RNA sequence: GGGAACGACUCGAGUAGAGUCGAAAAUGGUAGUCCACGCCGUAAACGAUGCGCACUAAAUCGGUGCCGGUCUGACCCGGUAUCGGUCGACGUGAAAACGAUAAGUGCGCCGCCUGGGGAGUACGGUCCUCCGGGCUAAAUUCGUUUAGCCCGGAGGAAAAGAAACAACAACAACAAC
Reactivity to 2A3 in 0.01 (KOAc 150mM, MgCl2 10mM, bicine 150mM(pH8.5), 24C), signal-to-noise 3, nucleotides 027 to 126: u140g000g030u060a030g050u020c020c000a020c070g020c000c000g100u090a010a020a070c070g050a070u140g000c000g000c000a000c010u040a050a060a080u050c010g000g000u000g000c000c000g030g040u040c300u240g110a130c040c000c000g000g000u010a000u010c010g010g000u030c020g050a080c050g060u110g160a120a030a010a000c030g010a090u030a160a000g000u010g000c000g010c000c000g020c000c010u020g000g000g000g010a010g040u060a020c020g000g050u020
Reactivity to DMS in 0.01 (KOAc 150mM, MgCl2 10mM, bicine 150mM(pH8.5), 24C), signal-to-noise 1, nucleotides 027 to 126: u070g000g000u000a000g000u010c000c050a110c050g040c030c010g000u000a010a060a060c130g050a110u010g010c040g000c000a000c000u000a130a220a000u000c000g020g040u000g050c010c000g000g000u080c180u000g000a200c300c000c050g030g000u000a000u000c000g020g000u000c100g000a180c000g000u000g000a050a010a100a000c000g000a180u020a060a020g040u010g080c000g000c000c180g000c140c020u040g060g070g000g000a010g020u040a000c090g000g000u000